[RMDB]
RNA sequence: GGGAACGACUCGAGUAGAGUCGAAAAGGACUGCGCAGUCAGGCAACAUCAGCAGAGAGCCCGCUAUACGUGACGGAUUGGCUGAAGCGUACAGAAAUAUUGAGCCUCCUGCAAGAGGCAGCCAAGCAAAACGUACGUGAGUUCGCUCACGUACGAACUUGGUAGUUGAGUUCGCUCAACUACCAAGAAAAGAAACAACAACAACAAC
Reactivity to DMS in 0.01 (KOAc 150mM, MgCl2 10mM, bicine 150mM(pH8.5), 24C), signal-to-noise 1, nucleotides 027 to 156: g020g020a030c020u000g020c060g000c060a060g030u000c030a050g030g000c030a040a080c100a160u010c010a110g070c000a120g000a120g040a110g000c000c040c070g030c020u000a060u000a040c050g000u000g000a240c110g030g010a280u010u000g020g060c000u000g000a090a300g000c040g000u010a170c050a020g000a070a080a220u010a130u030u000g000a140g030c000c010u010c000c010u000g020c130a090a090g010a130g020g030c000a020g000c030c000a180a090g010c170a040a010a130a170c000g010u000a000c000g050u010g000a010g010u010u010c290g030c020u000c000a010c000g010u000a000c010g010a000a000
Reactivity to 2A3 in 0.01 (KOAc 150mM, MgCl2 10mM, bicine 150mM(pH8.5), 24C), signal-to-noise 1, nucleotides 027 to 156: g010g020a040c000u020g010c080g000c050a030g030u090c030a000g070g040c020a040a030c020a160u110c030a030g030c030a010g040a010g000a010g130c040c020c000g000c010u050a060u030a130c080g030u050g070a010c020g060g020a140u090u100g050g000c010u030g010a060a010g010c000g020u060a000c030a050g100a090a160a020u240a070u100u150g050a070g020c000c000u010c000c040u120g010c040a060a040g010a020g040g000c010a000g010c020c000a020a010g010c040a010a130a030a010c000g000u000a000c000g000u000g000a000g020u070u140c230g010c120u010c010a000c000g000u000a000c000g000a000a020
Description:
The record gives the reactivity of an RNA of 207 nucleotides to DMS and 2A3. Values are in units of 0.01, from 0 to 300, in steps of 10. Values cover nucleotides 27 to 156. For DMS, 1,918 sequencing reads were counted. For 2A3, 2,822 sequencing reads were counted.